[RMDB]
RNA sequence: GGGAACGACUCGAGUAGAGUCGAAAAGAUAUGGAGAAAGCUUUGAUCGUGUGUGUCGGAAACGACACCACGGGAGCUUCUCCUAAGUCAAAACAGAUCUCCAAUUCUUCGGAAUUGGAGAUCUGAACGUAACCAAGUAGUUCGCUACUUGGUUACGAAAAGAAACAACAACAACAAC
Reactivity to 2A3 in 0.01 (KOAc 150mM, MgCl2 10mM, bicine 150mM(pH8.5), 24C), signal-to-noise 3, nucleotides 027 to 126: g030a010u060a030u150g000g010a010g020a050a180a040g010c040u300u230u100g110a140u290c020g000u030g020u010g000u000g000u040c010g020g010a050a060a050c010g000a010c000a010c000c000a000c000g000g010g000a000g000c000u000u000c000u000c000c000u000a090a040g020u030c030a010a020a060a180c010a010g000a010u010c000u000c000c000a000a010u020u000c020u040u110c300g130g010a000a000u000u000g000g010a000g000a000u010c000u000g000a000a010
Reactivity to DMS in 0.01 (KOAc 150mM, MgCl2 10mM, bicine 150mM(pH8.5), 24C), signal-to-noise 3, nucleotides 027 to 126: g000a030u010a300u000g000g000a010g000a050a020a040g010c000u000u000u020g010a110u020c000g010u010g010u010g010u010g000u000c000g000g010a120a070a190c010g010a020c010a000c000c020a000c000g000g000g000a000g010c000u000u000c000u000c000c000u000a010a070g020u000c020a050a060a120a300c020a010g010a000u000c000u000c000c000a000a010u000u000c000u000u020c220g030g000a010a010u010u000g000g000a010g000a000u000c000u010g000a020a070